RNA sequence: GGGAACGACUCGAGUAGAGUCGAAAAGAUAUGGAGAUUGACAUGACAUGUCCGAUUGGGUCGGAAACGACCUAAAGGACAACAGCAUGCAAUCUCCUAAGUCAAAAGUGUUACUUCGGUAACACAAGUUACUAAAUUGGUUCGCCAAUUUAGUAACAAAAGAAACAACAACAACAAC
Reactivity to 2A3 in 0.01 (KOAc 150mM, MgCl2 10mM, bicine 150mM(pH8.5), 24C), signal-to-noise 8, nucleotides 027 to 126: g020a010u060a020u140g010g000a000g010a010u000u030g060a180c000a000u020g030a080c050a150u170g010u000c010c010g070a090u080u230g030g000g000u000c010g020g020a080a060a040c000g000a000c000c000u000a010a020a020g000g020a000c000a020a020c040a020g050c000a000u000g000c000a000a000u000c000u000c000c000u000a020a010g030u010c030a020a040a060a180g000u000g000u010u010a010c010u030u140c300g150g000u010a010a000c010a000c000a000a020
Reactivity to DMS in 0.01 (KOAc 150mM, MgCl2 10mM, bicine 150mM(pH8.5), 24C), signal-to-noise 9, nucleotides 027 to 126: g010a030u000a300u000g000g000a010g010a020u000u000g000a190c000a010u000g000a080c090a270u010g000u000c000c000g000a250u000u000g010g010g000u010c000g000g010a090a080a180c000g010a010c000c000u000a000a040a240g000g000a010c000a030a070c290a180g010c000a010u000g000c000a000a000u000c000u000c000c000u000a010a050g010u010c030a110a100a100a150g000u000g000u000u000a010c000u000u020c220g020g000u000a010a010c010a000c000a050a080
Notes:
The data come from the RNA Mapping Database (RMDB), library TTRDES. The record gives the reactivity of an RNA of 177 nucleotides to 2A3 and DMS. DMS adducts were read by reverse transcription with MarathonRT. High DMS reactivity at an A or C suggests that its Watson-Crick edge is free. 2A3 adducts were read by reverse transcription with SuperScript II with manganese. The DMS profile rests on 18,169 reads.